The record gives the reactivity of an RNA of 207 nucleotides to 2A3. For 2A3, 398 sequencing reads were counted. The reactions ran in a buffer of 150 mM KOAc, 10 mM MgCl2 and 150 mM bicine (pH 8.5), at 24 C.
RNA sequence: GGGAACGACUCGAGUAGAGUCGAAAAUCGAGCGCCUCACGCUGAAGUAUCAGCCGCUCGCUCAGGCGACCCGCAACUAUGAGGCCGCAGUUACCGAGAUCGAACGAGCGCACAAGAUCGGCGCCAUCAACGCCCAGCAGAUGACCCAAGCGCUCGACGAUCGAGGGAGGUUCGCCUCCCUCGAUCGAAAAGAAACAACAACAACAAC
Reactivity to 2A3 in 0.01 (KOAc 150mM, MgCl2 10mM, bicine 150mM(pH8.5), 24C), signal-to-noise 1, nucleotides 027 to 156: u040c000g020a010g040c030g010c040c010u060c020a000c050g010c010u010g010a270a030g040u300a070u010c020a010g180c180c020g000c020u000c000g020c020u050c030a010g030g030c000g000a000c000c000c000g000c060a080a290c000u110a090u300g000a060g090g000c090c030g000c030a090g090u110u260a110c100c100g020a010g020a050u140c110g010a020a010c000g010a000g030c040g020c050a050c020a150a070g000a040u030c010g020g000c010g050c050c020a180u110c060a000a020c020g010c000c000c000a000g030c000a000g030a300u020g050a080c120c000c040a040a080g000c010g000c000u000c000g010a000